RNA sequence: GGGAACGACUCGAGUAGAGUCGAAAAGAUAUGGAGAUGAGAAAGCUGCGCCCUCUCGGAAACGAGAGGGAACUACGAACUACAGCUAAUCAUCUCCUAAGUCAAAAGCGGAACUUCGGUUCCGCAACUAAUCUUUCUUGUUCGCAAGAAAGAUUAGAAAAGAAACAACAACAACAAC
Reactivity to DMS in 0.01 (KOAc 150mM, MgCl2 10mM, bicine 150mM(pH8.5), 24C), signal-to-noise 5, nucleotides 027 to 126: g010a030u010a300u010g000g010a000g010a000u000g000a010g000a150a120a030g010c000u000g010c140g000c000c000c000u000c000u010c010g000g000a120a090a200c000g010a000g010a010g010g010g000a010a000c070u010a210c130g010a080a080c130u010a140c020a010g010c000u010a030a300u000c000a000u010c000u000c000c000u010a000a050g010u010c030a080a060a130a130g000c000g010g000a010a010c000u000u020c200g040g000u000u000c000c000g000c010a010a030
Reactivity to 2A3 in 0.01 (KOAc 150mM, MgCl2 10mM, bicine 150mM(pH8.5), 24C), signal-to-noise 4, nucleotides 027 to 126: g020a010u050a030u180g000g000a000g000a000u000g010a000g040a160a300a010g040c030u070g020c000g010c030c010c000u000c000u000c000g030g040a090a040a020c000g000a010g010a010g030g040g010a010a000c010u080a020c030g080a080a010c050u160a080c170a020g010c000u010a010a050u000c000a000u000c000u000c000c000u010a030a000g010u000c030a000a000a080a120g000c010g010g000a010a000c000u050u100c290g070g000u010u000c000c000g000c000a000a000